[RMDB]
RNA sequence: GGGAACGACUCGAGUAGAGUCGAAAACGUCAAUCACGACCGGUGGCUCCUACGCAAACACCGCCAUCACAAGUUACACGGACUCCGAUUACGGAUUCACAUUCACUUUUACACAGGGUAGUGGAUCGUCCAAGAUUGAUGAGGCACAGUUUGUGUGGUGGUGCUUUAAUUUCGAUUAAAGCACCACAAAAGAAACAACAACAACAAC
Reactivity to DMS in 0.01 (KOAc 150mM, MgCl2 10mM, bicine 150mM(pH8.5), 24C), signal-to-noise 1, nucleotides 027 to 156: c000g000u000c100a060a180u000c160a170c080g040a040c060c000g000g000u020g000g020c040u000c030c000u000a100c040g060c030a020a000a000c000a100c010c040g020c050c040a000u010c030a180c120a080a140g030u000u010a120c050a110c130g000g000a090c050u000c020c000g000a170u000u010a120c240g010g010a070u000u010c030a030c010a050u020u000c020a070c050u000u000u010u010a110c180a230c240a050g040g000g040u010a080g040u000g020g030a010u000c090g070u000c010c080a030a220g000a090u000u050g000a080u010g010a090g000g000c070a090c070a150g000u000u000u000g080u020g000u030g020
Reactivity to 2A3 in 0.01 (KOAc 150mM, MgCl2 10mM, bicine 150mM(pH8.5), 24C), signal-to-noise 4, nucleotides 027 to 156: c050g050u060c070a070a140u110c060a070c190g120a100c040c070g080g010u030g040g010c040u040c020c020u060a000c020g010c030a040a020a030c030a020c030c080g020c030c020a110u020c000a000c000a050a050g050u160u160a090c070a030c060g000g040a010c010u060c070c050g080a110u170u300a110c090g020g000a010u050u040c010a010c000a070u050u090c040a030c070u030u070u120u250a100c140a020c030a030g030g040g100u080a010g020u000g010g000a010u040c020g000u000c010c000a060a040g040a070u020u100g020a060u020g020a060g010g010c020a030c020a110g010u030u050u000g010u020g020u030g060